[RMDB]
RNA sequence: GGGAACGACUCGAGUAGAGUCGAAAAGAAAGAAAGAAAGGUCCACUGGCCUCUCCUGAGGCAGAUGAUGACUUUGCGACGGGCGGACGGAGGGACGCGUGACGAAGUUUGUCGUAUUCUGAAUUAAGUUAAAGACGACCUUCGGGUCGUCUUUAACAAAAGAAACAACAACAACAAC
Reactivity to 2A3 in 0.01 (KOAc 150mM, MgCl2 10mM, bicine 150mM(pH8.5), 24C), signal-to-noise 1, nucleotides 027 to 126: g110a000a070a010g090a010a020a040g080a050a060a000g030g000u000c040c060a010c040u090g300g020c000c000u000c000u130c030c040u010g040a040g060g000c020a040g000a090u000g030a000u060g020a020c000u070u070u060g000c000g010a020c050g060g040g030c020g000g010a050c000g050g050a110g000g000g000a030c050g000c030g010u040g010a000c020g070a060a050g000u050u120u030g040u030c040g000u040a220u140u000c000u000g020a100a030u080u050a280a050
Reactivity to DMS in 0.01 (KOAc 150mM, MgCl2 10mM, bicine 150mM(pH8.5), 24C), signal-to-noise 1, nucleotides 027 to 126: g000a170a100a010g080a070a030a060g000a120a110a050g020g000u020c030c000a030c140u020g000g000c000c000u000c010u000c140c260u010g000a020g000g000c000a020g000a170u000g000a130u000g000a000c090u000u000u040g010c020g020a050c000g010g000g000c210g000g000a080c080g040g000a140g000g000g030a040c040g050c040g000u000g000a080c020g000a080a090g010u020u000u000g000u000c000g000u000a120u000u000c110u000g000a110a070u040u110a060a080
This 177-nucleotide RNA was probed chemically with 2A3 and DMS. The DMS profile rests on 1,079 reads. The data come from the RNA Mapping Database (RMDB), library RFM100. The reactions ran in a buffer of 150 mM KOAc, 10 mM MgCl2 and 150 mM bicine (pH 8.5), at 24 C.